Description: Chemical mapping of a 177-nucleotide RNA with 2A3 and DMS.

RNA sequence: GGGAACGACUCGAGUAGAGUCGAAAACUCUAGUUCUUAGAGGAUCAAAGUAGAGGAGUAUGUGCUGAUUAAAAGGUGGCAGCUUCUUGAUUAUCAUUGGUUCUUGCUGAGGAAUGUAUUCUAAUUAAUACUGCUAUAUGUUCGCAUAUAGCAGUAUAAAAGAAACAACAACAACAAC
Reactivity to 2A3 in 0.01 (KOAc 150mM, MgCl2 10mM, bicine 150mM(pH8.5), 24C), signal-to-noise 5, nucleotides 027 to 126: c000u000c030u050a040g090u080u030c020u010u050a010g000a010g020g010a000u020c020a010a010a060g030u040a030g020a000g020g000a000g000u030a020u020g020u010g010c010u020g020a130u240u230a090a060a040a020g000g000u000g020g000c000a000g000c000u000u010c000u000u010g000a020u040u120a050u070c060a030u000u020g000g000u020u000c000u020u120g110c040u040g020a000g020g060a080a060u110g020u070a230u040u030c060u080a060a120u090u090a050
Reactivity to DMS in 0.01 (KOAc 150mM, MgCl2 10mM, bicine 150mM(pH8.5), 24C), signal-to-noise 6, nucleotides 027 to 126: c010u010c030u000a090g010u000u010c020u000u000a070g010a040g010g000a010u000c010a010a020a070g030u000a110g000a010g010g000a010g010u000a000u000g000u000g000c010u000g000a130u010u060a100a170a140a300g000g010u000g000g000c000a020g000c000u000u000c010u000u000g000a110u030u010a050u000c030a090u010u010g000g000u000u000c010u010u010g010c090u000g000a020g000g000a050a060u010g000u020a070u010u010c040u000a030a060u020u000a070
The data come from the RNA Mapping Database (RMDB), libraries RFM100 and RFMREP.
The reactions ran in a buffer of 150 mM KOAc, 10 mM MgCl2 and 150 mM bicine (pH 8.5), at 24 C.
For 2A3 the reverse transcriptase was SuperScript II with manganese.